[RMDB]
RNA sequence: GGGAACGACUCGAGUAGAGUCGAAAAGAACUAUGGCGUUGACCUCGAGCUGCUGCAGCGGGUGCAGCGCGCUGUCGGUCUGGCCAGAGUGGAUGAUCCUGACGCGGUGGUGCACAUGCGUGCCGACAACUACACAAAUCUUCGGAUUUGUGUAGUUAAAAGAAACAACAACAACAAC
Reactivity to DMS in 0.01 (KOAc 150mM, MgCl2 10mM, bicine 150mM(pH8.5), 24C), signal-to-noise 9, nucleotides 027 to 126: g010a090a040c020u000a060u000g000g010c010g020u010u000g010a020c010c000u000c280g000a070g010c010u000g020c010u000g010c010a070g010c210g010g010g020u010g010c010a010g010c010g010c110g010c040u000g010u010c180g000g010u000c010u000g010g010c020c010a020g000a030g020u000g010g000a080u000g000a120u000c010c010u000g010a070c100g020c050g000g020u000g010g010u010g010c060a070c060a070u010g010c070g020u000g000c040c060g000a130c210
Reactivity to 2A3 in 0.01 (KOAc 150mM, MgCl2 10mM, bicine 150mM(pH8.5), 24C), signal-to-noise 8, nucleotides 027 to 126: g030a010a010c020u020a030u050g020g000c120g190u110u060g010a020c020c000u030c080g080a020g000c030u060g000c010u020g000c040a060g080c170g260g140g120u050g000c000a010g000c000g020c060g000c010u050g060u150c080g000g000u000c020u030g060g000c010c010a000g010a000g010u030g000g070a060u070g010a040u010c000c010u020g030a020c040g000c030g050g050u060g040g100u190g090c060a030c030a090u200g030c040g030u030g030c030c010g030a040c040
An RNA of 177 nucleotides, treated with DMS and 2A3 and read out base by base. Reactivities are given for positions 27 through 126. The RNA was probed in 150 mM KOAc, 10 mM MgCl2 and 150 mM bicine (pH 8.5) at 24 C. 2A3 adducts were read by reverse transcription with SuperScript II with manganese. High 2A3 reactivity points to a flexible backbone, as in loops and unpaired stretches.